RNA sequence: GGGAACGACUCGAGUAGAGUCGAAAAGCGUAUCGCAUAUAUCGCCGCUAUUAUGCGUAUGCGGCGUAUUAUAUACGCUAUAUAGCGAUAAUAGCGUAUCGCAUAAUAGCGUAUAUAUAUCGCGCGCCAGUGUGAGCGAAUUCGUUCGCUCACACUGAAAAGAAACAACAACAACAAC
Reactivity to DMS in 0.01 (KOAc 150mM, MgCl2 10mM, bicine 150mM(pH8.5), 24C), signal-to-noise 4, nucleotides 027 to 126: g000c030g020u000a040u010c050g010c040a040u000a010u010a120u000c080g010c070c050g020c050u010a160u000u000a030u000g000c060g000u000a060u000g000c000g010g000c010g020u000a010u000u000a000u000a050u000a110c000g020c000u000a010u000a030u000a060g010c010g010a020u000a050a130u010a160g030c280g010u000a010u000c000g000c010a020u000a020a020u000a010g000c000g010u000a000u000a010u010a020u020a070u010c060g010c020g010c080g010c100
Reactivity to 2A3 in 0.01 (KOAc 150mM, MgCl2 10mM, bicine 150mM(pH8.5), 24C), signal-to-noise 4, nucleotides 027 to 126: g010c020g030u070a070u280c040g020c040a020u060a010u020a010u090c060g030c090c010g000c050u030a060u130u050a060u210g040c050g030u070a020u130g020c030g000g000c000g000u010a010u050u000a000u010a000u010a000c010g000c000u000a010u010a010u070a020g000c000g010a010u020a090a110u140a140g150c120g140u040a020u010c000g000c010a000u130a130a020u000a020g000c000g010u000a000u000a000u000a000u000a000u020c080g000c020g000c010g020c010
About this RNA:
This 177-nucleotide RNA was probed chemically with DMS and 2A3. 2A3 is a SHAPE reagent: it acylates the 2'-hydroxyl of flexible nucleotides of all four kinds. The 2A3 profile rests on 6,204 reads. The RNA was probed in 150 mM KOAc, 10 mM MgCl2 and 150 mM bicine (pH 8.5) at 24 C.